[RMDB]
RNA sequence: GGGAACGACUCGAGUAGAGUCGAAAAUAAUGUUACGCGAGCAGGCGCCCACGCUGAAAGUCCAGGGGGUAGAUUUACAGCGUUAUGCCGAUCAGUUGAUUGCGCGUUACCGUAAUCCGGCGCUGCGGUCCGUGGCUAAUUUCGAUUAGCCACGGACAAAAGAAACAACAACAACAAC
Reactivity to 2A3 in 0.01 (KOAc 150mM, MgCl2 10mM, bicine 150mM(pH8.5), 24C), signal-to-noise 1, nucleotides 027 to 126: u080a020a030u120g070u050u050a030c020g030c120g050a000g020c030a050g040g040c010g020c000c020c000a000c040g000c000u030g040a130a020a000g050u000c050c030a060g010g040g000g100g040u050a020g000a060u000u000u130a070c010a020g000c000g000u070u070a050u160g020c000c000g020a050u060c030a000g140u150u150g100a070u000u140g030c030g000c000g060u030u040a050c080c000g000u040a020a020u000c010c020g000g000c000g000c040u050g050c000g020
Reactivity to DMS in 0.01 (KOAc 150mM, MgCl2 10mM, bicine 150mM(pH8.5), 24C), signal-to-noise 1, nucleotides 027 to 126: u030a060a040u000g000u000u000a100c140g020c070g000a140g000c040a110g000g040c060g060c010c040c210a040c000g020c020u000g040a070a000a050g000u000c000c060a270g000g000g000g000g040u010a190g000a020u000u020u020a180c050a000g030c010g000u000u000a040u020g000c020c070g010a100u010c100a190g000u020u000g000a070u040u010g020c040g000c120g000u000u010a000c050c020g010u020a010a000u010c070c010g000g000c010g000c000u040g000c140g000